[RMDB]
RNA sequence: GGGAACGACUCGAGUAGAGUCGAAAAAGCAACGAGUGUGUGUGGGACGUUUUAACCCAAGCUCUGAGUAGAGCACGCGCUCACACACACCGCGAGCGAGCAUCAGCAGAGCGCAAACGCUGGUAAAUAUAUUAACGAAAUUCGUUUCGUUAAUAUAAAAAGAAACAACAACAACAAC
Reactivity to 2A3 in 0.01 (KOAc 150mM, MgCl2 10mM, bicine 150mM(pH8.5), 24C), signal-to-noise 9, nucleotides 027 to 126: a000g060c040a050a050c010g020a100g070u010g000u000g000u010g000u000g010g010g030a040c010g010u040u040u080u260a120a080c040c030c020a030a020g000c000u000c010u070g300a240g170u300a010g170a000g010c000a000c020g040c010g000c000u000c010a000c000a000c000a000c000a000c010c000g030c010g010a020g010c010g000a030g020c010a030u050c010a000g010c020a020g030a050g140c090g010c110a110a060a030c070g000c020u020g010g010u060a030a160a000
Reactivity to DMS in 0.01 (KOAc 150mM, MgCl2 10mM, bicine 150mM(pH8.5), 24C), signal-to-noise 9, nucleotides 027 to 126: a100g010c030a180a050c020g010a270g020u000g010u000g010u000g020u000g000g000g010a080c010g010u000u010u010u010a100a150c080c060c070a070a130g010c000u000c000u000g000a190g020u010a060g000a010g010c010a070c080g000c060g010c000u000c000a010c000a010c000a010c010a000c010c010g010c030g000a230g000c020g000a130g010c100a040u000c020a030g010c010a090g010a120g010c080g010c110a080a080a100c120g000c020u000g010g000u000a060a060a140
The record gives the reactivity of an RNA of 177 nucleotides to 2A3 and DMS. For DMS the reverse transcriptase was MarathonRT. The RNA was probed in 150 mM KOAc, 10 mM MgCl2 and 150 mM bicine (pH 8.5) at 24 C. Values cover nucleotides 27 to 126. The 2A3 profile rests on 19,132 reads. It was measured as part of the RMDB library M2PK90.